[RMDB]
RNA sequence: GGGAACGACUCGAGUAGAGUCGAAAAGAUCAACCGAAUGAGGGUUACAAGAAAUCUGCUAGGCGGUAGCUAUGGACGACGUCGAUGAUUUCCUGAUGCACUACGGUGUGAAAGGUAUGAAGUGGGGUAAGCGAUCUGCUCGCCCGUCCACAACUCCUGGCACGGUGAUGUUCGCAUCACCGUGCCAAAAAGAAACAACAACAACAAC
Reactivity to 2A3 in 0.01 (KOAc 150mM, MgCl2 10mM, bicine 150mM(pH8.5), 24C), signal-to-noise 3, nucleotides 027 to 156: g040a070u040c040a000a050c000c040g020a090a120u160g030a110g100g010g040u030u070a070c030a060a050g050a030a080a010u060c030u070g020c070u040a020g020g030c020g030g140u090a020g020c100u110a060u170g040g000a040c050g010a010c030g050u060c040g030a060u050g040a050u060u020u030c000c000u020g030a050u150g000c020a010c030u080a020c160g120g000u020g000u040g030a190a070a040g050g000u080a070u140g050a140a000g040u050g010g000g000g020u030a040a020g020c000g040a070u030c080u180g010c030u010c030g000c000c000c010g020u000c000c000a080c020a060a030c020u010c000c000
Reactivity to DMS in 0.01 (KOAc 150mM, MgCl2 10mM, bicine 150mM(pH8.5), 24C), signal-to-noise 1, nucleotides 027 to 156: g020a150u020c080a070a240c020c000g030a140a070u000g000a130g010g050g010u000u000a110c080a130a110g010a010a040a030u000c040u020g010c040u010a080g020g010c210g020g000u000a140g040c060u000a070u000g020g080a070c010g010a030c010g000u000c000g000a060u000g000a090u020u000u000c000c000u030g000a140u010g020c000a070c000u000a110c060g070g000u010g030u000g000a050a080a070g000g000u010a080u040g020a060a140g050u000g010g000g040g010u010a010a090g000c000g000a040u010c140u000g040c060u000c030g030c000c050c010g010u020c020c060a030c070a020a090c030u010c010c040